[RMDB]
Structure probing data (DMS and 2A3) for a 207-nucleotide construct. For DMS the reverse transcriptase was MarathonRT. The RNA was probed in 150 mM KOAc, 10 mM MgCl2 and 150 mM bicine (pH 8.5) at 24 C.
RNA sequence: GGGAACGACUCGAGUAGAGUCGAAAAUUUGGAAGUGAAACAGAGGCUUGUAUGCCCUUGAGCUUUUUCUGUUAAGGGUCCCCAGACAGAGCUGUGGCUUCCAGGCUUCUCUGCAGCAUGAUCUGCCUUUGUACUUUAGGUUCAUGCAAAGUGGAUCCUUACUCAUCAAGUUCGCUUGAUGAGUAAGAAAAGAAACAACAACAACAAC
Reactivity to DMS in 0.01 (KOAc 150mM, MgCl2 10mM, bicine 150mM(pH8.5), 24C), signal-to-noise 2, nucleotides 027 to 156: u000u000u000g020g000a060a050g010u000g000a210a110a150c060a030g010a050g000g020c010u000u010g010u010a130u020g010c060c010c030u000u000g030a180g010c060u030u010u000u000u020c020u010g030u000u000a010a070g010g010g010u000c010c020c090c040a140g000a120c070a060g000a070g000c050u000g000u000g010g010c030u000u000c090c040a140g010g000c050u000u000c020u000c020u000g000c000a300g020c010a030u050g000a060u030c080u010g030c020c040u000u000u000g020u000a060c040u010u000u000a050g020g030u020u010c020a030u010g010c020a030a090a200g020u000g020g000a100u000c000
Reactivity to 2A3 in 0.01 (KOAc 150mM, MgCl2 10mM, bicine 150mM(pH8.5), 24C), signal-to-noise 3, nucleotides 027 to 156: u030u020u030g010g010a010a010g010u060g100a220a080a080c080a080g070a120g070g000c040u150u140g110u220a090u210g020c020c000c000u030u080g030a020g010c010u070u080u010u110u060c050u030g030u070u060a060a050g010g010g030u000c050c020c010c010a010g000a010c010a020g050a020g010c010u030g020u060g190g010c000u000u000c000c000a010g000g030c000u040u000c010u030c000u010g000c020a010g000c010a010u020g000a050u030c080u160g020c000c010u040u020u110g100u120a120c040u030u090u060a040g020g000u060u040c010a010u000g000c010a000a020a040g080u150g020g010a010u010c010
For 2A3, 1,794 sequencing reads were counted. 2A3 adducts were read by reverse transcription with SuperScript II with manganese. The DMS profile rests on 3,562 reads. The data come from the RNA Mapping Database (RMDB), library OK3TST.